Structure probing data (DMS and 2A3) for a 177-nucleotide construct. The 2A3 profile rests on 9,702 reads. For DMS, 16,379 sequencing reads were counted. DMS (dimethyl sulfate) methylates the pairing face of unpaired adenines and cytosines. Reactivities are given for positions 27 through 126.

[RMDB]
RNA sequence: GGGAACGACUCGAGUAGAGUCGAAAAUAUGGGCAGUUCGCUGCCCAUACGAGCGGAGUCCGGCAGUAUGAGCCCGCAGCGUUGGUGCGUAGCCGCGGUGCAGAGACCAAGCCUUCGGGCUUGGUAAACUAUCAGACUGAUUCGUCAGUCUGAUAGUAAAAGAAACAACAACAACAAC
Reactivity to DMS in 0.01 (KOAc 150mM, MgCl2 10mM, bicine 150mM(pH8.5), 24C), signal-to-noise 8, nucleotides 027 to 126: u010a010u000g000g000g020c000a010g010u000u010c230g020c010u000g000c000c000c000a000u000a000c070g010a100g010c050g010g000a110g000u000c030c030g000g020c040a080g010u000a060u000g000a150g010c040c020c030g010c030a030g010c040g010u000u010g030g010u000g010c150g010u000a200g010c020c030g010c020g000g010u010g010c050a110g020a160g000a040c000c000a010a010g010c000c000u000u010c200g030g010g010c000u000u000g000g010u000a000a040
Reactivity to 2A3 in 0.01 (KOAc 150mM, MgCl2 10mM, bicine 150mM(pH8.5), 24C), signal-to-noise 5, nucleotides 027 to 126: u070a010u010g000g000g000c000a020g020u040u090c150g040c140u000g010c000c000c000a000u000a000c000g020a020g050c040g020g040a060g080u030c030c010g030g020c030a020g040u150a090u220g070a030g030c000c010c010g000c020a020g040c020g040u100u260g040g000u080g030c070g060u110a010g000c010c010g020c020g020g020u030g000c020a020g000a010g020a140c000c000a000a000g000c010c000u040u060c200g090g010g000c000u000u000g000g000u000a020a000